[RMDB]
RNA sequence: GGGAACGACUCGAGUAGAGUCGAAAAGGGGAAGCCCGUCAGAUAGCGCGUUUCGCGCGAGCUUCGAAAGGGAAUCGGGUUAAAAUUCCUGAACCGGGACGUGGCGGCUGACGGCAACGUUAGGGAGCGAUAAGUUUUUCUUCGGAAAAACUUAUCGAAAAGAAACAACAACAACAAC
Reactivity to DMS in 0.01 (KOAc 150mM, MgCl2 10mM, bicine 150mM(pH8.5), 24C), signal-to-noise 5, nucleotides 027 to 126: g020g000g000g030a160a130g000c100c000c010g020u000c020a000g010a160u040a090g000c000g000c000g020u020u030u050c120g020c000g000c000g010a100g010c030u000u000c030g020a040a110a300g010g000g010a080a080u000c010g010g000g000u000u020a040a070a120a180u030u030c010c000u000g000a020a090c050c010g010g000g010a300c030g010u000g000g010c020g010g010c000u010g020a010c010g010g020c090a090a050c110g030u000u000a100g000g000g000a150g010
Reactivity to 2A3 in 0.01 (KOAc 150mM, MgCl2 10mM, bicine 150mM(pH8.5), 24C), signal-to-noise 9, nucleotides 027 to 126: g020g000g000g020a050a030g050c020c010c010g000u000c000a000g030a080u140a110g000c010g000c020g050u110u300u300c090g020c000g010c010g010a010g000c010u060u050c030g070a070a020a020g050g010g000a070a210u080c020g020g000g020u030u060a040a060a090a130u200u070c000c000u010g010a040a040c000c000g010g010g020a010c020g000u030g020g000c010g000g010c010u000g000a000c000g000g000c020a060a010c040g030u060u100a070g010g020g040a070g040

The record gives the reactivity of an RNA of 177 nucleotides to DMS and 2A3. For 2A3 the reverse transcriptase was SuperScript II with manganese. The DMS profile rests on 9,085 reads. Source: RMDB library OK1LIB, as collected in RNAgym. Reactivities are given for positions 27 through 126.